[RMDB]
RNA sequence: GGGAACGACUCGAGUAGAGUCGAAAAGUGCUGUACGUUGACGAAGCGUUCGCGUGCCACGCAGGAGCACUACUUGCCUUGAUUGCUAUCGUCAGGCCCCGCAAGAAGGUAGUACUAUGCGGAGACCCCGCUGUACAUAUUUCGAUAUGUACAGCGGAAAAGAAACAACAACAACAAC
Reactivity to DMS in 0.01 (KOAc 150mM, MgCl2 10mM, bicine 150mM(pH8.5), 24C), signal-to-noise 6, nucleotides 027 to 126: g030u000g020c030u010g040u010a020c040g020u000u000g010a080c120g010a120a120g010c070g020u000u000c110g010c040g020u000g010c030c080a080c050g010c050a060g000g010a030g010c030a030c010u000a060c040u000u010g010c050c010u000u000g010a060u000u010g010c090u000a070u010c060g010u000c050a070g000g010c010c090c040c050g010c100a040a040g020a130a050g010g000u000a070g010u000a100c040u000a080u000g000c010g000g010a150g000a160c080c050
Reactivity to 2A3 in 0.01 (KOAc 150mM, MgCl2 10mM, bicine 150mM(pH8.5), 24C), signal-to-noise 6, nucleotides 027 to 126: g060u040g020c040u020g030u080a020c020g040u080u210g080a030c050g080a170a060g090c030g070u060u040c030g000c020g030u050g070c030c030a050c040g000c020a030g050g200a040g000c020a010c000u060a030c030u080u110g020c010c000u040u090g060a100u070u160g040c050u100a090u230c030g050u010c020a020g030g000c010c010c000c010g020c010a030a060g090a050a020g090g000u030a010g020u010a070c030u040a050u100g020c020g030g010a040g020a090c000c020